Source: RMDB libraries RFM100 and RFMREP, as collected in RNAgym. An RNA of 177 nucleotides, treated with 2A3 and DMS and read out base by base. For 2A3 the reverse transcriptase was SuperScript II with manganese. DMS adducts were read by reverse transcription with MarathonRT. The reactions ran in a buffer of 150 mM KOAc, 10 mM MgCl2 and 150 mM bicine (pH 8.5), at 24 C.
RNA sequence: GGGAACGACUCGAGUAGAGUCGAAAACAUUGCGAGGGCCACCGUGUUCAAGCGCGGGGAGUCAAACGGGCACGACCCGAAACCCGGUGAUCUACGCGUGGGCAAGGUGAAGCAUGGCGAAAGCCAUCAUGAAUUAUAUCUUCGGAUAUAAUUCAUGAAAAGAAACAACAACAACAAC
Reactivity to 2A3 in 0.01 (KOAc 150mM, MgCl2 10mM, bicine 150mM(pH8.5), 24C), signal-to-noise 9, nucleotides 027 to 126: c030a050u080u220g030c050g060a140g030g070g020c020c000a010c010c010g020u010g020u060u060c100a150a050g050c040g000c010g050g020g030g010a040g100u070c040a060a110a130c020g000g010g000c100a060c190g190a240c030c020c030g050a080a040a040c010c010c000g000g020u050g010a040u020c030u100a030c020g000c010g010u060g010g010g000c020a040a040g020g010u030g040a060a020g040c040a040u060g010g000c010g040a070a020a010g000c000c000a010u010
Reactivity to DMS in 0.01 (KOAc 150mM, MgCl2 10mM, bicine 150mM(pH8.5), 24C), signal-to-noise 7, nucleotides 027 to 126: c080a130u020u020g010c050g010a210g000g010g010c070c000a030c010c010g020u010g000u000u000c070a060a110g030c050g020c030g000g000g000g030a100g000u020c040a020a120a140c030g000g000g000c170a120c160g000a150c070c040c050g000a040a110a140c010c010c000g000g020u010g000a070u010c030u020a080c020g010c020g020u000g000g000g010c010a020a020g000g000u000g010a110a110g010c070a040u000g000g000c000g020a100a060a120g000c000c010a030u010